[RMDB]
The record gives the reactivity of an RNA of 177 nucleotides to DMS and 2A3.
For 2A3 the reverse transcriptase was SuperScript II with manganese.
The data come from the RNA Mapping Database (RMDB), library OK2TRN.
The reactions ran in a buffer of 150 mM KOAc, 10 mM MgCl2 and 150 mM bicine (pH 8.5), at 24 C.
RNA sequence: GGGAACGACUCGAGUAGAGUCGAAAACUGUGGUGCCGACAUCGGGCGUGGCGGCACCCUCGGCAUCGGCACCCAAUUCUGCGUCAUCGAGCAGCGACAGGGGAUGGUGACGAUACCGCUCGCGCCCGAGACACAAGAUGUUCGCAUCUUGUGUCUCAAAAGAAACAACAACAACAAC
Reactivity to DMS in 0.01 (KOAc 150mM, MgCl2 10mM, bicine 150mM(pH8.5), 24C), signal-to-noise 4, nucleotides 027 to 126: c180u020g020u000g020g030u000g010c010c000g000a060c170a100u010c070g020g010g050c020g040u000g000g020c030g020g010c020a030c020c000c010u000c030g000g000c030a010u000c000g010g000c100a290c000c000c030a050a140u020u010c020u000g010c040g010u000c110a210u000c230g000a160g000c040a070g020c280g000a090c120a170g000g000g000g030a270u010g000g000u000g000a020c020g000a070u000a130c000c010g000c110u010c040g010c030g000c000c010c010
Reactivity to 2A3 in 0.01 (KOAc 150mM, MgCl2 10mM, bicine 150mM(pH8.5), 24C), signal-to-noise 2, nucleotides 027 to 126: c080u060g100u220g080g000u010g000c010c010g030a050c030a110u100c100g030g000g000c020g000u020g040g000c000g000g000c000a020c000c010c000u010c010g020g000c020a020u010c030g020g000c120a050c000c000c010a020a030u100u020c010u020g000c000g140u120c040a250u170c110g110a050g100c030a010g020c050g090a080c060a080g000g000g000g040a020u080g000g000u010g000a000c020g000a010u060a050c000c020g010c060u080c040g020c010g000c000c000c010